[RMDB]
RNA sequence: GGGAACGACUCGAGUAGAGUCGAAAACGACCUUAAAUUGCGCGAACUGCAGCGAUCGCGUAUACUUUUGGCGUUGACGUAAUACAGUGUGCUUGCGGCUACCACCUGUAACCAUGCUGAUAAAAACAUCGCACCCCUAAUUCGUUAGGGGUGCGAUAAAAGAAACAACAACAACAAC
Reactivity to 2A3 in 0.01 (KOAc 150mM, MgCl2 10mM, bicine 150mM(pH8.5), 24C), signal-to-noise 3, nucleotides 027 to 126: c040g130a210c000c000u070u080a030a050a050u080u090g020c000g000c000g000a020a050c010u140g000c050a030g020c070g110a040u010c000g000c010g000u000a010u100a060c090u070u010u020u040g030g000c000g000u000u060g020a040c100g060u170a040a060u090a100c000a000g050u030g000u020g090c010u000u010g010c000g000g020c080u190a160c030c080a030c000c000u050g020u020a000a000c020c000a000u060g000c010u000g040a110u150a020a110a010a000a010c090
Reactivity to DMS in 0.01 (KOAc 150mM, MgCl2 10mM, bicine 150mM(pH8.5), 24C), signal-to-noise 1, nucleotides 027 to 126: c070g000a300c010c000u000u000a000a000a020u000u000g000c000g000c000g000a000a080c120u020g020c090a010g000c040g000a030u000c000g000c030g030u000a010u010a030c070u000u000u000u000g000g000c000g070u000u000g000a280c100g030u040a040a100u010a130c020a050g000u000g000u000g000c240u000u010g000c000g000g010c100u000a160c020c140a070c090c030u000g000u050a000a060c090c040a040u000g000c040u010g030a140u000a060a120a020a090a030c150